Chemical mapping of a 177-nucleotide RNA with DMS. DMS adducts were read by reverse transcription with MarathonRT. Source: RMDB library OK2TRN, as collected in RNAgym.

[RMDB]
RNA sequence: GGGAACGACUCGAGUAGAGUCGAAAAAAUGGUACCCAACCAAAGUAACUUGUAUAUACAUGUUUUUAGAUUGAAGACUUCUGGCUGAAAACAGAUGUGACAAAUCCUGCCCCCUAACGAAAUAGGCAGAUAUGAACCGAUUCGUCGGUUCAUAUCUAAAAGAAACAACAACAACAAC
Reactivity to DMS in 0.01 (KOAc 150mM, MgCl2 10mM, bicine 150mM(pH8.5), 24C), signal-to-noise 1, nucleotides 027 to 126: a060a080u010g000g010u000a030c060c000c010a160a150c010c030a040a080a100g010u000a040a050c040u000u010g040u000a120u010a090u000a130c010a060u000g000u000u010u000u000u000a030g010a050u030u000g000a090a130g000a110c070u000u020c040u000g030g040c050u020g000a030a020a020a070c040a020g030a030u000g020u010g000a090c040a010a020a100u010c010c020u000g000c010c010c000c030c050u040a070a070c120g040a080a080a110u010a030g010g000c090

Notes: The RNA was probed in 150 mM KOAc, 10 mM MgCl2 and 150 mM bicine (pH 8.5) at 24 C.